[RMDB]
RNA sequence: GGGAACGACUCGAGUAGAGUCGAAAAAGCUCGUCUGGCGAUGCGGGAUGAACCGAACGCAAAGUUAAAGUGCCAAAAUGCUCGCUCACCUAGAUACCAUAAAAGGUGUUGGUUCAUUUAGACAGCACUAAUCUCAAAUCUUCGGAUUUGAGAUUAGAAAAGAAACAACAACAACAAC
Reactivity to 2A3 in 0.01 (KOAc 150mM, MgCl2 10mM, bicine 150mM(pH8.5), 24C), signal-to-noise 3, nucleotides 027 to 126: a000g030c020u040c040g050u020c060u060g030g000c010g010a030u060g020c040g030g000g020a040u110g050a060a060c060c040g010a050a020c030g010c020a050a080a030g020u090u100a160a050a010g050u090g070c010c000a010a100a030a050u080g020c020u010c020g040c020u010c010a020c000c000u020a040g060a170u120a140c020c040a080u150a170a120a010a040g020g000u010g010u040u040g000g000u010u010c000a000u040u030u080a050g010a030c020a010g000c010a000
Reactivity to DMS in 0.01 (KOAc 150mM, MgCl2 10mM, bicine 150mM(pH8.5), 24C), signal-to-noise 3, nucleotides 027 to 126: a130g010c030u000c070g020u000c070u000g010g000c010g000a130u010g020c050g000g000g020a110u000g020a090a070c070c040g000a110a110c090g010c050a040a080a150g010u000u010a060a090a080g000u000g000c000c040a050a050a060a070u000g010c040u000c030g010c030u000c020a000c010c010u000a080g000a100u010a090c120c090a070u010a100a090a100a090g000g010u010g010u000u010g000g010u000u000c010a050u000u000u000a110g020a060c080a040g000c080a140